[RMDB]
RNA sequence: GGGAACGACUCGAGUAGAGUCGAAAACACCCACAUUCCAAUGGCGGGUUUGGUACGAAUGUAUAAUUUGUUAGCAUGCCUUUGGCUUUUACGCAAGUUUUAUCAGCAUGUAAUCAAUGGUUGCAAAUAGGCUUCUCCUUCGGGAGAAGCAAAAGAAACAACAACAACAAC
Reactivity to 2A3 in 0.01 (KOAc 150mM, MgCl2 10mM, bicine 150mM(pH8.5), 24C), signal-to-noise 3, nucleotides 027 to 129: c040a010c010c060c000a070c000a090u160u050c060c100a060a040u050g040g040c050g030g010g000u100u070u020g020g020u090a020c010g010a080a090u160g090u080a080u040a150a120u180u030u100g050u070u050a010g050c000a030u000g000c000c000u100u010u060g030g000c000u000u040u160u140a020c100g020c040a030a020g030u010u000u020u090a200u100c040a010g000c000a030u110g000u060a090a020u080c050a030a080u080g010g040u000u000g050c030a020a080a110u030a140g030
Reactivity to DMS in 0.01 (KOAc 150mM, MgCl2 10mM, bicine 150mM(pH8.5), 24C), signal-to-noise 3, nucleotides 027 to 129: c300a290c030c000c000a100c300a030u050u090c170c120a150a130u000g000g000c260g010g040g020u010u050u020g010g020u000a030c140g010a070a050u060g000u110a150u040a100a080u090u000u000g000u030u040a000g040c000a050u080g060c090c040u100u000u030g000g060c060u000u000u000u000a250c070g060c070a070a080g070u000u000u070u050a000u020c170a110g000c070a050u010g020u050a130a090u040c220a050a100u000g050g000u000u030g010c040a070a060a040u040a080g000

This 170-nucleotide RNA was probed chemically with 2A3 and DMS. The reactions ran in a buffer of 150 mM KOAc, 10 mM MgCl2 and 150 mM bicine (pH 8.5), at 24 C. As a SHAPE reagent, 2A3 marks flexible, mostly unpaired nucleotides at the ribose 2'-OH. Reactivities are given for positions 27 through 129. The DMS profile rests on 4,982 reads. 2A3 adducts were read by reverse transcription with SuperScript II with manganese.